[RMDB]
RNA sequence: GGGAACGACUCGAGUAGAGUCGAAAAUAAUCUGACUGGCUAUGAGGUCAGACCUCAUGCGCAUCUCAUAUCAUGGCAGUCAUGGGGUGCAGAGACCUGGGUUCAUUCGCGAACUCAGGAUUGUGCAGAUAGUAGACUAAUUCGUUGGUUUGCUAUCAAAAGAAACAACAACAACAAC
Reactivity to 2A3 in 0.01 (KOAc 150mM, MgCl2 10mM, bicine 150mM(pH8.5), 24C), signal-to-noise 9, nucleotides 027 to 126: u120a010a070u050c010u010g010a010c000u020g060g030c030u050a020u100g040a020g010g010u010c010a010g020a060c000c000u120c030a090u160g050c040g000c060a050u010c020u010c030a050u060a060u110c040a040u050g050g000c020a020g180u180c030a040u020g000g000g000g010u010g000c010a020g040a010g020a140c010c000u000g000g000g010u000u010c010a040u160u180c120g030c100g090a000a000c000u000c000a000g020g000a010u020u080g060u040g020c010a010
Reactivity to DMS in 0.01 (KOAc 150mM, MgCl2 10mM, bicine 150mM(pH8.5), 24C), signal-to-noise 9, nucleotides 027 to 126: u060a100a170u030c010u000g000a020c010u000g020g000c030u010a040u000g010a050g000g000u000c040a020g000a120c050c010u010c140a070u020g010c100g010c030a040u000c040u000c040a040u010a130u010c040a030u010g000g020c010a180g010u030c090a020u010g000g000g000g020u000g010c010a100g010a110g010a100c000c000u010g000g000g000u000u000c000a190u040u050c280g000c190g000a010a000c000u000c000a010g000g000a070u010u010g020u010g000c080a100

Chemical mapping of a 177-nucleotide RNA with 2A3 and DMS. For 2A3, 68,840 sequencing reads were counted. The RNA was probed in 150 mM KOAc, 10 mM MgCl2 and 150 mM bicine (pH 8.5) at 24 C. High 2A3 reactivity points to a flexible backbone, as in loops and unpaired stretches.